RNA sequence: GGGAACGACUCGAGUAGAGUCGAAAAUUAUGGUAUGUCAAAAAUUGCGGAGGACUGCAACAAACUACAGGCUAUUGCAGACACAGCCCCCUUGACCCUAAAUUGUGACAGAAUUGAAAAGAAGGGAUCUCUGUACCUCAUUCGUGAGGUACAGAGAAAAAGAAACAACAACAACAAC
Reactivity to DMS in 0.01 (KOAc 150mM, MgCl2 10mM, bicine 150mM(pH8.5), 24C), signal-to-noise 3, nucleotides 027 to 126: u010u030a090u010g010g020u020a050u000g010u060c030a070a020a040a100a090u040u010g030c080g020g000a160g010g000a130c010u000g010c030a010a040c110a080a090a170c120u010a060c130a100g010g020c060u010a060u000u000g000c040a030g010a130c060a090c070a080g010c030c010c000c020c020u000u010g010a070c030c000c010u020a070a030a050u020u010g000u010g010a090c050a100g000a100a090u000u000g000a090a010a090a100g000a040a010g000g000g020a120
Reactivity to 2A3 in 0.01 (KOAc 150mM, MgCl2 10mM, bicine 150mM(pH8.5), 24C), signal-to-noise 2, nucleotides 027 to 126: u100u040a030u070g120g020u050a030u100g050u010c030a000a020a030a080a180u050u100g000c070g000g040a100g080g000a070c040u000g010c000a040a020c090a020a140a040c000u120a120c130a060g000g120c020u070a040u170u000g000c000a000g030a020c010a000c040a190g050c010c010c020c010c020u000u100g090a070c000c000c000u010a000a120a000u110u120g060u030g020a040c080a050g090a070a060u150u190g120a100a050a010a040g140a010a050g040g010g000a000

An RNA of 177 nucleotides, treated with DMS and 2A3 and read out base by base. Values cover nucleotides 27 to 126. The data come from the RNA Mapping Database (RMDB), library OK1LIB.